Structure probing data (DMS and 2A3) for a 177-nucleotide construct.
The reactions ran in a buffer of 150 mM KOAc, 10 mM MgCl2 and 150 mM bicine (pH 8.5), at 24 C.
Values are in units of 0.01, from 0 to 300, in steps of 10.
It was measured as part of the RMDB library OK2TRN.
[RMDB]
RNA sequence: GGGAACGACUCGAGUAGAGUCGAAAACAGGUUAGCGCCAAAGAAGCUGGUGAUGAUGAAGCGAUGUUCUACGACGAAGACUAUGUUACUGCACUGGAGCAUGGCUUGCCGCCGACCGCGGGUCUGGCUUAGCACAACUUUUCGAAGUUGUGCUAAGAAAAGAAACAACAACAACAAC
Reactivity to DMS in 0.01 (KOAc 150mM, MgCl2 10mM, bicine 150mM(pH8.5), 24C), signal-to-noise 9, nucleotides 027 to 126: c060a080g010g010u000u000a120g010c080g010c030c040a050a130a110g010a090a100g010c050u000g010g010u000g000a080u010g010a100u000g010a070a060g020c020g010a050u010g010u000u000c020u010a060c100g020a100c130g000a090a070g010a080c090u010a080u010g020u000u010a080c070u000g000c080a090c120u000g000g010a040g010c030a030u000g000g000c030u000u000g010c050c030g010c030c030g010a070c060c050g020c070g010g000g000u000c030u010g010g010
Reactivity to 2A3 in 0.01 (KOAc 150mM, MgCl2 10mM, bicine 150mM(pH8.5), 24C), signal-to-noise 5, nucleotides 027 to 126: c020a010g020g050u070u090a020g030c010g000c040c020a050a070a040g160a070a030g030c080u060g020g030u040g030a110u040g010a040u090g080a030a010g010c030g060a030u040g020u050u000c020u050a040c060g150a020c050g060a110a010g040a040c050u100a100u300g100u110u100a100c040u080g040c060a030c070u030g010g000a000g000c010a010u020g070g000c010u010u050g040c010c000g010c000c010g030a040c000c020g030c040g020g000g040u020c030u040g040g010